[RMDB]
RNA sequence: GGGAACGACUCGAGUAGAGUCGAAAACAUCGACGAAAUCUUCGCGAUGCUACGUGCCCACAUCGCGACCGGCGGGUACGCCGCGCUGGUCGCGCCGGGCACCGGAACCGCACACCGCGUGGUGGAAGCGGUAGGAACUAUUCGUAGUUCCUACCGCAAAAGAAACAACAACAACAAC
Reactivity to DMS in 0.01 (KOAc 150mM, MgCl2 10mM, bicine 150mM(pH8.5), 24C), signal-to-noise 4, nucleotides 027 to 126: c010a030u000c020g030a130c000g010a020a180a190u010c250u000u000c010g010c000g010a010u000g010c010u000a100c150g000u000g020c000c010c010a080c150a130u010c010g010c000g000a010c010c000g020g040c000g010g020g030u010a060c260g010c050c030g020c010g040c000u010g010g010u000c010g010c010g000c250c110g010g010g010c010a010c010c060g010g010a120a140c020c020g000c080a170c010a050c020c000g020c160g010u000g000g020u010g010g010a180a130
Reactivity to 2A3 in 0.01 (KOAc 150mM, MgCl2 10mM, bicine 150mM(pH8.5), 24C), signal-to-noise 4, nucleotides 027 to 126: c000a010u030c000g300a290c020g070a150a080a240u200c150u230u030c060g010c010g000a020u020g040c040u090a040c040g010u000g000c000c060c000a020c030a070u150c000g010c000g000a000c000c000g000g010c030g030g000g050u100a070c200g050c080c020g150c000g000c010u010g000g000u000c000g020c000g010c000c020g010g020g010c000a000c000c010g010g030a030a050c020c020g000c020a040c010a020c040c030g140c180g200u300g010g020u010g050g050a120a040

An RNA of 177 nucleotides, treated with DMS and 2A3 and read out base by base.
2A3 adducts were read by reverse transcription with SuperScript II with manganese.
Reactivities are given for positions 27 through 126.
It was measured as part of the RMDB library OK2TRN.
The reactions ran in a buffer of 150 mM KOAc, 10 mM MgCl2 and 150 mM bicine (pH 8.5), at 24 C.
For DMS, 3,710 sequencing reads were counted.
For DMS the reverse transcriptase was MarathonRT.